[RMDB]
RNA sequence: GGGAACGACUCGAGUAGAGUCGAAAAGCAAAGCACAUGAAGCACAUGAAGCACAUGAAGCACAUGAAGCACAUGAAGCACAUGAAGCACAUCAAGCACAUGAAGCACAUGAAGCACAUGAAAAAAACACAAUUCUAUGGUUCGCCAUAGAAUUGUGAAAAGAAACAACAACAACAAC
Reactivity to DMS in 0.01 (KOAc 150mM, MgCl2 10mM, bicine 150mM(pH8.5), 24C), signal-to-noise 2, nucleotides 027 to 126: g000c110a060a070a050g050c030a180c010a010u010g010a080a130g010c060a110c060a090u010g000a090a060g010c050a170c060a020u010g010a070a090g010c040a170c020a080u000g030a100a040g040c020a250c020a020u040g000a030a110g010c030a270c020a030u000g010a110a130g010c060a080c050a090u020c090a060a080g020c010a100c010a090u000g010a060a070g010c000a030c080a010u000g040a090a060g020c020a090c030a050u010g010a020a000a040a050a070a140a180
Reactivity to 2A3 in 0.01 (KOAc 150mM, MgCl2 10mM, bicine 150mM(pH8.5), 24C), signal-to-noise 2, nucleotides 027 to 126: g040c020a030a070a050g020c000a020c000a080u030g040a070a010g020c010a030c010a070u040g060a110a010g020c000a010c000a060u030g080a080a010g000c020a020c010a090u030g060a120a030g000c010a000c000a040u030g060a130a030g000c020a000c010a070u010g050a120a000g010c030a040c010a080u070c070a050a080g000c030a020c000a050u010g050a090a000g020c000a030c030a070u040g050a060a010g010c030a020c020a090u040g090a120a060a000a000a000a000a000